[RMDB]
Structure probing data (2A3 and DMS) for a 207-nucleotide construct. The DMS profile rests on 2,002 reads. Reactivities are rounded to 0.1 and cut off at 0 and 3. For DMS the reverse transcriptase was MarathonRT. Source: RMDB library M2RFPK, as collected in RNAgym.

RNA sequence: GGGAACGACUCGAGUAGAGUCGAAAAAGCCUGGUCGAUACGUCGACCAGGCAAUGCCGCCACAACGGCUUCCUGGCGUGGCGGAUCUCAUCCAAUGGAGCAACGCUCCGGAUACGUCCGCAGCGAAAAAAGCUCUGCUUCUUCGGAAGCAGAGCAAGUUAACUAUAAGGUUCGCCUUAUAGUUAACAAAAGAAACAACAACAACAAC
Reactivity to 2A3 in 0.01 (KOAc 150mM, MgCl2 10mM, bicine 150mM(pH8.5), 24C), signal-to-noise 4, nucleotides 027 to 156: a000g200c010c000u000g000g000u000c000g000a000u000a080c180g080u010c000g000a010c010c000a010g020g000c000a000a000u010g000c000c010g000c040c100a110c030a080a050c020g040g000c000u060u040c000c010u050g050g000c120g040u060g070g010c010g010g010a020u030c050u050c060a040u000c020c050a090a190u270g010g000a030g010c080a130a130c200g010c020u050c070c000g000g000a020u030a010c070g010u000c000c000g000c020a030g000c000g080a110a010a030a060a020a000g000c000u000c000u000g000c000u000u000c000u000u040c110g120g000a010a000g000c000a000g000a000g000c010a000a000
Reactivity to DMS in 0.01 (KOAc 150mM, MgCl2 10mM, bicine 150mM(pH8.5), 24C), signal-to-noise 1, nucleotides 027 to 156: a240g000c000c000u000g030g000u000c040g020a040u000a030c210g070u000c000g010a040c020c000a020g020g020c000a000a010u000g000c000c000g000c030c160a180c190a120a130c010g060g030c030u000u000c030c030u000g010g020c040g000u010g000g030c020g040g010a010u010c040u000c130a070u010c060c030a200a180u040g000g000a000g000c070a180a120c180g020c030u000c050c000g000g000a030u000a040c260g000u000c000c020g040c020a000g000c020g020a010a040a050a040a200a130g020c000u000c020u000g000c000u000u010c000u000u010c300g020g020a030a030g020c000a010g020a000g000c000a000a010